RNA sequence: GGGAACGACUCGAGUAGAGUCGAAAAUUCGGCGCCCAGGGAGAGCGUGUGUUUCCGGUCUUUCCUCCCGGGAGCGAUACCUUCGCCCACAUGGUAUUCAAGCUCAGUACGUCCAUGACCCCCGACAGUCAGUCUGUUUAUUCGUAAACAGACUGACAAAAGAAACAACAACAACAAC
Reactivity to DMS in 0.01 (KOAc 150mM, MgCl2 10mM, bicine 150mM(pH8.5), 24C), signal-to-noise 1, nucleotides 027 to 126: u000u000c110g020g030c020g010c020c020c030a110g020g020g000a040g000a070g020c060g010u000g010u000g010u000u000u010c020c000g020g020u010c040u010u000u010c040c010u000c150c010c000g000g000g020a040g030c000g010a030u010a030c020c050u000u000c080g020c020c010c010a070c140a080u010g000g000u000a040u000u000c130a090a140g010c030u000c050a080g030u000a060c030g010u010c030c030a060u000g000a290c050c010c030c010c010g000a100c190a070
Notes:
This 177-nucleotide RNA was probed chemically with DMS. The DMS profile rests on 1,463 reads.